[RMDB]
Chemical mapping of a 177-nucleotide RNA with DMS and 2A3.
2A3 adducts were read by reverse transcription with SuperScript II with manganese.
The 2A3 profile rests on 1,098 reads.
RNA sequence: GGGAACGACUCGAGUAGAGUCGAAAACGGGUAUCUGGAGUCUGCAGUGCCUCGCGCAGCCGUAGGAGGGUCAGGAGGACGCUAGGGCACAGGGUCAGGAGUGCAGCCCCCUGCUCUGAGCGGCGCAUGCUACCGAAUCAUUCGUGAUUCGGUAGCAAAAAGAAACAACAACAACAAC
Reactivity to DMS in 0.01 (KOAc 150mM, MgCl2 10mM, bicine 150mM(pH8.5), 24C), signal-to-noise 2, nucleotides 027 to 126: c080g000g020g040u010a060u000c020u000g020g000a120g030u010c040u000g030c040a060g010u000g030c030c020u000c120g010c090g000c040a120g020c090c010g050u010a190g020g020a100g000g000g000u010c110a030g000g010a040g010g000a100c070g020c040u000a050g000g000g030c020a060c120a090g000g000g000u000c040a070g000g010a040g000u010g000c030a100g020c010c000c010c000c100u000g000c020u000c010u010g000a230g020c040g000g010c050g000c160a150
Reactivity to 2A3 in 0.01 (KOAc 150mM, MgCl2 10mM, bicine 150mM(pH8.5), 24C), signal-to-noise 1, nucleotides 027 to 126: c050g000g060g000u100a110u160c080u060g040g050a050g160u050c100u220g050c010a010g010u020g020c010c000u030c020g080c050g010c070a020g050c000c010g000u060a030g000g080a060g050g040g060u150c000a030g020g040a030g090g000a060c020g030c030u050a070g040g030g030c020a030c020a090g160g010g000u090c030a040g020g110a060g080u090g000c000a030g020c000c000c020c000c000u000g010c010u050c020u060g020a060g020c000g000g040c020g000c010a030
Description:
In probing experiments dimethyl sulfate is read out at A N1 and C N3, which are open when not base-paired. It was measured as part of the RMDB library OK2TRN. The reactions ran in a buffer of 150 mM KOAc, 10 mM MgCl2 and 150 mM bicine (pH 8.5), at 24 C.